RNA sequence: GGGAACGACUCGAGUAGAGUCGAAAAGUGGGAAUGCGGUGAAAGUAACUCCGCCAGCUGGAACGAAUGUGUUCGUGGAGUGCAAAUGCAGCAGUGGGCAAAUAUCAGAAACCACCAGCCAGGCCAAAAGCCUAAAUAUUUUCGAAUAUUUAGGCUUAAAAGAAACAACAACAACAAC
Reactivity to 2A3 in 0.01 (KOAc 150mM, MgCl2 10mM, bicine 150mM(pH8.5), 24C), signal-to-noise 3, nucleotides 027 to 126: g080u070g000g030g020a140a070u060g010c030g000g040u020g040a080a060a060g060u070a040a050c050u020c020c010g020c020c000a020g010c010u120g020g020a030a010c030g020a160a170u210g060u030g010u120u050c030g000u070g040g030a070g000u040g040c020a060a070a070u140g000c020a010g020c020a020g010u040g010g010g010c040a050a090a000u130a060u070c000a010g080a040a060a010c020c020a020c000c000a010g030c010c010a010g060g000c020c010a020a080
Reactivity to DMS in 0.01 (KOAc 150mM, MgCl2 10mM, bicine 150mM(pH8.5), 24C), signal-to-noise 9, nucleotides 027 to 126: g030u000g010g010g010a100a080u000g010c060g010g020u000g010a090a100a130g010u010a080a100c080u000c020c020g010c020c090a090g010c040u000g000g000a100a060c060g010a090a110u000g020u010g020u000u010c090g010u010g000g000a050g010u000g010c060a070a080a110u010g000c050a050g010c040a070g020u010g010g010g000c060a040a050a060u000a070u010c080a070g010a070a080a110c050c030a050c040c040a060g000c030c050a070g010g000c060c100a050a080